RNA sequence: GGGAACGACUCGAGUAGAGUCGAAAAAGUUUGUAUGUUAACAAGCACGCUUUUCAUACACCAGCAUAUGAUGUGAGUGCAUUCCGUGAUCUGAAACCUUUACCAUUCUUUUAUUAUUCUACUACACCGCGAGUCGGGUUCGCCCGACUCAAAAGAAACAACAACAACAAC
Reactivity to DMS in 0.01 (KOAc 150mM, MgCl2 10mM, bicine 150mM(pH8.5), 24C), signal-to-noise 5, nucleotides 027 to 129: a080g010u010u010u020g030u040a060u060g020u050u010a100a050c060a080a110g040c060a120c100g030c100u000u000u000u000c090a060u040a070c040a090c050c080a120g060c110a170u040a100u060g020a050u000g030u000g000a080g030u060g030c000a070u050u030c050c050g030u010g000a080u040c020u070g020a110a100a070c060c100u020u050u030a080c190c060a060u020u000c030u020u060u010u010a030u000u000a040u000u020c020u010a030c030u040a060c180a080c000c100g060c090
Reactivity to 2A3 in 0.01 (KOAc 150mM, MgCl2 10mM, bicine 150mM(pH8.5), 24C), signal-to-noise 5, nucleotides 027 to 129: a000g020u020u060u050g090u010a140u000g030u010u050a100a040c050a030a080g060c010a030c020g020c020u080u100u020u020c000a020u020a050c000a010c050c040a000g010c040a050u030a040u110g030a010u030g100u020g030a060g020u050g000c020a030u070u000c020c030g020u060g020a060u010c000u040g020a050a050a090c020c010u050u070u040a060c030c040a080u040u030c030u050u090u020u020a100u080u020a080u050u060c030u020a060c020u030a030c040a030c050c020g030c000